[RMDB]
RNA sequence: GGGAACGACUCGAGUAGAGUCGAAAAGCAGAUGGAAUUGGUGGUGUAGGGGUAAAAUCCGUAGAUAUCACCAAGAAUACCCAUUGCGAAGGCGAUCUGCUGGAACUCAACUGACGCUAAGGCGCGACAGGCUGUAAUACUUCGGUAUUACAGCCUGAAAAGAAACAACAACAACAAC
Reactivity to 2A3 in 0.01 (KOAc 150mM, MgCl2 10mM, bicine 150mM(pH8.5), 24C), signal-to-noise 1, nucleotides 027 to 126: g010c000a020g010a070u090g070g020a040a100u010u000g000g000u000g000g000u010g000u010a040g030g000g010g040u010a010a020a000a020u070c030c000g070u130a000g020a090u040a000u010c010a000c020c000a000a000g020a030a040u160a080c010c040c040a060u070u130g000c050g080a090a050g200g060c070g050a030u010c020u040g000c040u020g060g040a040a060c000u000c030a020a170c070u100g040a010c030g020c020u040a070a080g020g000c030g000c010g020a020
Reactivity to DMS in 0.01 (KOAc 150mM, MgCl2 10mM, bicine 150mM(pH8.5), 24C), signal-to-noise 2, nucleotides 027 to 126: g050c000a040g010a020u000g010g000a160a130u010u010g010g020u000g000g010u000g010u000a090g030g000g000g000u000a050a050a180a160u020c020c010g000u000a140g020a010u000a000u010c000a020c010c010a010a000g000a130a150u020a090c110c000c060a100u000u000g010c000g060a150a080g000g020c000g010a090u010c010u000g000c010u000g000g000a160a130c030u000c020a080a150c150u030g010a090c000g030c030u000a050a140g010g010c050g020c030g040a240